[RMDB]
RNA sequence: GGGAACGACUCGAGUAGAGUCGAAAAGAAAAUAGCGUAAUGGACAUUGAGAAUGUACGCUAAGUGUGUGUUGUAUAAAUAACGUCCAAUUGAUCACACACACAGUUGGACCUAAUGUCCAAAAAAAUACUAUCCUGCGAUUCGUCGCAGGAUAGUAAAAAGAAACAACAACAACAAC
Reactivity to 2A3 in 0.01 (KOAc 150mM, MgCl2 10mM, bicine 150mM(pH8.5), 24C), signal-to-noise 1, nucleotides 027 to 126: g090a030a100a010a020u050a000g030c010g030u020a000a070u070g010g000a010c000a020u080u110g050a060g100a170a160u130g000u040a000c020g000c050u010a060a060g010u000g000u000g000u010g040u060u090g120u060a140u090a130a030a030u080a010a070c020g100u030c020c040a020a020u030u050g060a090u040c010a000c010a020c000a010c000a010c030a020g110u190u000g030g010a020c020c010u020a050a030u080g010u070c020c000a010a010a010a000a010a010a010
Reactivity to DMS in 0.01 (KOAc 150mM, MgCl2 10mM, bicine 150mM(pH8.5), 24C), signal-to-noise 1, nucleotides 027 to 126: g000a110a080a060a100u020a040g020c030g000u000a040a120u000g020g020a050c010a060u000u000g020a120g010a130a120u010g000u000a010c010g000c010u000a060a160g020u000g020u010g000u000g030u000u010g050u000a050u010a030a080a020u030a040a160c140g000u030c060c070a020a100u010u020g000a060u000c010a010c010a010c000a000c010a100c000a080g040u000u000g000g000a080c020c070u000a050a030u000g000u000c000c000a000a000a020a080a040a030a100